[RMDB]
RNA sequence: GGGAACGACUCGAGUAGAGUCGAAAAAGAUGCGUGGUUGCGCGUCCUGAAUUAUGGCAUUGUUUUCGGGUUAAAUCCCACUUAACAAUUAAAAAAUUAAGCAAAAGACAACCACCUUUCCCGCUGAAGCAACAGUGGAAUUCGUUCCACUGUUGCUAAAAGAAACAACAACAACAAC
Reactivity to 2A3 in 0.01 (KOAc 150mM, MgCl2 10mM, bicine 150mM(pH8.5), 24C), signal-to-noise 3, nucleotides 027 to 126: a000g040a010u040g040c080g020u020g000g040u030u040g000c060g000c030g100u120c010c060u080g090a140a100u230u040a100u150g100g000c060a040u060u000g060u010u030u050u070c110g030g010g040u010u030a050a150a150u190c000c000c000a010c000u020u040a010a000c000a010a040u120u270a150a050a030a010a000a010u160u150a070a000g010c070a070a080a050a000g040a080c000a010a010c010c000a000c000c020u000u020u000c000c000c000g060c080u050g010a060
Reactivity to DMS in 0.01 (KOAc 150mM, MgCl2 10mM, bicine 150mM(pH8.5), 24C), signal-to-noise 2, nucleotides 027 to 126: a100g000a070u000g000c130g020u000g010g010u000u000g010c060g010c110g010u010c220c060u050g000a080a030u000u010a090u020g000g030c270a060u010u000g000u000u000u000u030c280g020g020g000u000u020a070a070a240u050c010c000c000a230c210u000u020a000a000c020a040a070u000u000a020a010a030a060a040a150u000u020a000a000g030c240a060a060a030a110g020a060c010a010a000c000c000a030c040c000u000u040u000c000c000c000g000c090u010g020a140